Chemical mapping of a 207-nucleotide RNA with 2A3.
The RNA was probed in 150 mM KOAc, 10 mM MgCl2 and 150 mM bicine (pH 8.5) at 24 C.
Values are in units of 0.01, from 0 to 300, in steps of 10.
High 2A3 reactivity points to a flexible backbone, as in loops and unpaired stretches.
It was measured as part of the RMDB library VIROID.
RNA sequence: GGGAACGACUCGAGUAGAGUCGAAAAGAAGGCUUGGCGGUAGGUGAAGAAGGAGCGAGCGCCGUAACGACCUGAGAACAGGAGAAACAGGAGCUCGACUCCUUCCUUUCUUCUCUCAUCGGGCAGGUGCCGCUUCCCUCCACCCUCGCCGGUCUUCGUAUUCCUAUUCGUUCGCGAAUAGGAAUACAAAAGAAACAACAACAACAAC
Reactivity to 2A3 in 0.01 (KOAc 150mM, MgCl2 10mM, bicine 150mM(pH8.5), 24C), signal-to-noise 4, nucleotides 027 to 156: g000a000a010g050g000c270u300u300g040g010c050g000g030u210a140g000g000u040g010a050a060g010a040a050g030g010a000g010c010g020a090g030c010g010c010c000g010u010a060a060c120g080a150c010c040u020g000a000g010a030a020c020a060g060g060a000g010a030a030a100c300a270g010g020a010g000c060u160c300g170a230c050u010c010c000u000u000c000c010u000u000u010c000u000u000c000u000c000u050c070a070u010c000g000g000g000c040a030g000g000u020g000c000c000g000c000u060u050c010c000c000u000c010c000a000c000c010c000u010c000g000c000c010g000g000u000c000u000u000c000